Structure probing data (2A3) for a 207-nucleotide construct. 2A3 adducts were read by reverse transcription with SuperScript II with manganese.

RNA sequence: GGGAACGACUCGAGUAGAGUCGAAAAAUCAGCCUUCGUUCUGUAAACGGGGUUGGAUCCGACUCUCAUAGGCUCUCCAUCCCAACUCCUACUCAAUACGUCCUCGUCGUACAGAACGGUAACAUGUAAAACGAAGGCUGCUUCGGCAGCCUUCGAAGUAAGUCAAACACUUCGGUGUUUGACUUACAAAAGAAACAACAACAACAAC
Reactivity to 2A3 in 0.01 (KOAc 150mM, MgCl2 10mM, bicine 150mM(pH8.5), 24C), signal-to-noise 1, nucleotides 027 to 156: a000u060c040a040g070c010c000u170u210c020g000u020u000c050u050g050u150a000a040a050c030g040g000g000g000u050u020g060g000a040u120c020c010g030a030c020u090c020u030c210a100u180a120g010g010c020u010c000u000c030c010a090u070c060c010c010a010a060c080u110c000c030u090a120c020u010c110a080a120u100a180c070g030u050c000c030u070c030g050u030c030g000u040a050c020a000g010a030a010c010g000g010u070a090a040c040a110u150g100u270a000a150a000a000c000g020a000a000g000g000c000u000g000c000u000u020c030g100g000c000a010g000c000c000u000u000c000g000a010a000
Notes: For 2A3, 808 sequencing reads were counted.